Chemical mapping of a 207-nucleotide RNA with DMS and 2A3. For DMS, 2,084 sequencing reads were counted. The reactions ran in a buffer of 150 mM KOAc, 10 mM MgCl2 and 150 mM bicine (pH 8.5), at 24 C. DMS adducts were read by reverse transcription with MarathonRT. The data come from the RNA Mapping Database (RMDB), library M2RFPK. Values cover nucleotides 27 to 156.
[RMDB]
RNA sequence: GGGAACGACUCGAGUAGAGUCGAAAACGGGAGUGAUCCAGAUGACGGUCCUGCCAUGAGACCGCAACGAGAGCAUGUCGCAUCGAAUGGACUCGGGGAGUCGGCAGCUCGCCCCACGGAUGAGCGCAUAAGACAGCCCCGUUCGCGGGGCUGUCAAGAGUGAAUCAAAGUUCGCUUUGAUUCACUCAAAAGAAACAACAACAACAAC
Reactivity to DMS in 0.01 (KOAc 150mM, MgCl2 10mM, bicine 150mM(pH8.5), 24C), signal-to-noise 1, nucleotides 027 to 156: c030g030g000g000a100g060u020g000a100u010c030c020a130g010a140u010g020a110c010g030g030u000c010c010u000g000c090c220a020u000g000a040g010a060c010c050g000c010a070a090c040g020a210g000a130g030c030a160u000g030u010c020g010c030a120u010c040g030a060a300u010g000g000a080c050u000c000g040g000g050g000a070g050u000c020g030g000c070a140g020c020u010c050g020c010c010c000c050a160c080g010g040a110u000g020a060g010c040g010c110a150u000a070a170g010a030c020a030g010c010c020c010c010g070u010u000c220g000c070g070g000g000g050c010u000g000u000c000a020a050
Reactivity to 2A3 in 0.01 (KOAc 150mM, MgCl2 10mM, bicine 150mM(pH8.5), 24C), signal-to-noise 2, nucleotides 027 to 156: c030g020g040g010a080g020u090g030a100u070c030c000a040g060a110u090g080a100c010g010g010u020c010c030u020g160c060c010a070u150g020a040g010a080c020c040g030c050a060a040c050g050a050g000a000g090c070a080u080g040u110c030g010c090a050u050c020g030a030a060u100g020g040a040c030u020c060g000g000g030g020a060g050u050c030g030g000c030a010g010c020u000c010g040c000c010c000c010a050c090g040g000a090u070g010a030g020c050g020c040a050u060a200a040g000a000c000a010g000c020c000c000c000g000u020u000c030g030c020g000g010g000g030c000u010g000u000c000a010a010